[RMDB]
RNA sequence: GGGAACGACUCGAGUAGAGUCGAAAAUCAAGUUUGGAGUCAUCCGGCCCGUAGGGGAGAAUAGAACACCGGGGGGUGAUCCACCAGGAGAAGGAGCGGAGAACCCACCUCCAGAGGACCCCUUCAGCGAGUAGACACUUCGGUGUCUACAAAAGAAACAACAACAACAAC
Reactivity to DMS in 0.01 (KOAc 150mM, MgCl2 10mM, bicine 150mM(pH8.5), 24C), signal-to-noise 8, nucleotides 027 to 129: u040c110a070a110g020u030u030u000g020g010a070g030u010c080a070u010c040c040g030g030c000c000c050g030u000a080g040g030g030g030a050g020a080a070u050a040g030a100a080c100a100c080c080g000g050g070g040g010g020u000g000a070u030c030c030a040c040c030a090g050g030a080g030a060a060g050g020a070g050c110g030g010a000g000a110a090c060c020c050a130c090c040u000c000c000a040g020a100g030g020a130c060c020c010c090u000u010c090a070g030c120g000a180
Reactivity to 2A3 in 0.01 (KOAc 150mM, MgCl2 10mM, bicine 150mM(pH8.5), 24C), signal-to-noise 6, nucleotides 027 to 129: u090c020a040a030g070u070u110u110g040g020a060g050u010c010a070u030c040c000g010g020c010c000c010g040u070a070g000g030g040g020a040g030a040a070u120a080g070a120a020c050a030c060c010g000g000g000g000g000g000u000g020a040u010c000c010a020c020c030a040g060g070a100g050a120a060g040g020a030g120c100g030g010a030g010a030a020c020c000c000a070c010c000u030c020c000a010g030a050g040g000a030c000c000c000c000u050u090c000a050g040c000g080a030
This 170-nucleotide RNA was probed chemically with DMS and 2A3. For 2A3, 14,857 sequencing reads were counted. The RNA was probed in 150 mM KOAc, 10 mM MgCl2 and 150 mM bicine (pH 8.5) at 24 C. Source: RMDB library 15KLIB, as collected in RNAgym. 2A3 adducts were read by reverse transcription with SuperScript II with manganese. Reactivities are rounded to 0.1 and cut off at 0 and 3.